[RMDB]
RNA sequence: GGGAACGACUCGAGUAGAGUCGAAAAGACUGCUGAUGAAACAAAGGCGCUUAAAGAGUUAUAUGGCCCCGUUGAUCCUACUUUCUUACACAGAUUCUAUUCACUUAAGGCUGCAGUCCAUGGGUGGCCUUCGAUUAUCUUUCGAGAUAAUCGAAGGAAAAGAAACAACAACAACAAC
Reactivity to DMS in 0.01 (KOAc 150mM, MgCl2 10mM, bicine 150mM(pH8.5), 24C), signal-to-noise 4, nucleotides 027 to 126: g020a060c010u000g000c010u010g000a110u030g000a110a090a090c170a040a120a050g010g010c070g040c030u000u020a040a070a150g020a150g010u010u000a100u010a080u030g000g040c000c010c010c060g000u030u000g000a100u000c020c000u000a070c070u020u020u000c040u030u000a070c090a050c160a130g010a050u010u030c040u010a080u000u000c080a080c100u020u010a100a100g000g000c030u000g000c050a030g000u020c040c060a090u010g000g010g010u010g000g010
Reactivity to 2A3 in 0.01 (KOAc 150mM, MgCl2 10mM, bicine 150mM(pH8.5), 24C), signal-to-noise 5, nucleotides 027 to 126: g040a020c040u050g000c020u040g020a110u070g050a120a090a050c040a020a110a060g020g000c060g000c020u030u040a100a090a030g100a020g040u210u080a170u060a080u300g040g010c020c000c000c000g040u040u060g060a110u020c020c010u020a060c050u090u100u080c010u010u110a040c090a000c010a050g050a060u050u070c040u050a090u070u060c030a040c060u060u100a100a030g090g000c030u070g010c080a010g030u000c010c020a020u080g020g000g030u040g030g020
Chemical mapping of a 177-nucleotide RNA with DMS and 2A3. The reactions ran in a buffer of 150 mM KOAc, 10 mM MgCl2 and 150 mM bicine (pH 8.5), at 24 C. DMS adducts were read by reverse transcription with MarathonRT. The 2A3 profile rests on 3,300 reads.